[RMDB]
RNA sequence: GGGAACGACUCGAGUAGAGUCGAAAACUGGCCGAGCGGACGUGCGUAGGGCCGCGCAACCGUCUCCCAGCCGUCCGUAGGCUGACCGGAUGGCGUACGACCCUGUACGCGACGCUGCAGCUCAACGCAGGUCAAUAACCUUCGGGUUAUUGACCUGAAAAGAAACAACAACAACAAC
Reactivity to DMS in 0.01 (KOAc 150mM, MgCl2 10mM, bicine 150mM(pH8.5), 24C), signal-to-noise 2, nucleotides 027 to 126: c120u000g000g030c010c030g020a100g000c030g000g000a050c040g020u000g000c020g040u010a130g000g000g020c110c040g010c080g010c140a140a100c140c040g010u000c060u000c130c030c040a140g030c000c000g000u010c040c130g000u020a130g010g020c000u000g020a070c140c070g000g000a040u000g000g030c060g000u000a020c000g010a120c050c060c040u010g000u000a020c000g000c020g000a070c030g000c060u000g000c020a090g000c050u000c130a070a140c140g010
Reactivity to 2A3 in 0.01 (KOAc 150mM, MgCl2 10mM, bicine 150mM(pH8.5), 24C), signal-to-noise 1, nucleotides 027 to 126: c040u040g030g010c010c050g060a050g010c000g010g000a120c020g070u150g040c000g030u120a210g000g000g010c000c020g000c010g020c010a040a040c050c040g070u060c040u000c030c030c000a000g020c000c010g070u120c040c040g010u010a040g020g000c010u020g030a020c000c000g060g030a130u080g150g000c010g040u060a040c020g090a170c030c050c010u040g040u070a000c010g010c020g010a000c020g000c020u100g000c040a050g020c010u020c130a030a050c070g000